Annotation: An RNA of 177 nucleotides, treated with DMS and 2A3 and read out base by base. DMS adducts were read by reverse transcription with MarathonRT. It was measured as part of the RMDB library TTRDEL.
[RMDB]
RNA sequence: GGGAACGACUCGAGUAGAGUCGAAAAGAUAUGGACCUGGAACUACGACCGAAGAUCUGAUGACCUCGGAAACGAGCAAGGAUUUAGGUCGCCAGGUCCUAAGUCAAAACGUCCCUUCGGGGACGAAGAGGUUAUCAGUCUUCGGACUGAUAACCUCAAAAGAAACAACAACAACAAC
Reactivity to DMS in 0.01 (KOAc 150mM, MgCl2 10mM, bicine 150mM(pH8.5), 24C), signal-to-noise 1, nucleotides 027 to 126: g000a170u000a300u000g000g000a010c010c000u000g000g000a040a020c160u020a260c100g010a010c010c010g030a120a130g000a020u000c020u000g000a190u020g030a070c300c000u010c010g000g020a030a040a210c010g020a000g030c060a140a150g000g020a000u000u000u000a270g000g000u000c020g020c000c030a040g010g030u000c000c000u000a020a020g000u000c030a070a040a060a070c050g000u000c000c000c000u000u020c150g050g010g000g020a000c000g000a010a050
Reactivity to 2A3 in 0.01 (KOAc 150mM, MgCl2 10mM, bicine 150mM(pH8.5), 24C), signal-to-noise 1, nucleotides 027 to 126: g020a010u080a010u090g020g000a000c010c030u000g020g040a120a130c230u160a060c260g010a000c000c000g060a070a050g000a000u000c000u030g090a250u170g100a300c020c000u010c020g010g040a100a030a020c010g020a010g020c000a030a210g050g020a020u150u150u200a020g000g000u000c000g000c000c000a040g010g030u000c000c000u000a010a000g000u000c000a000a000a010a090c030g000u000c000c010c000u000u020c230g030g020g000g010a010c000g000a050a030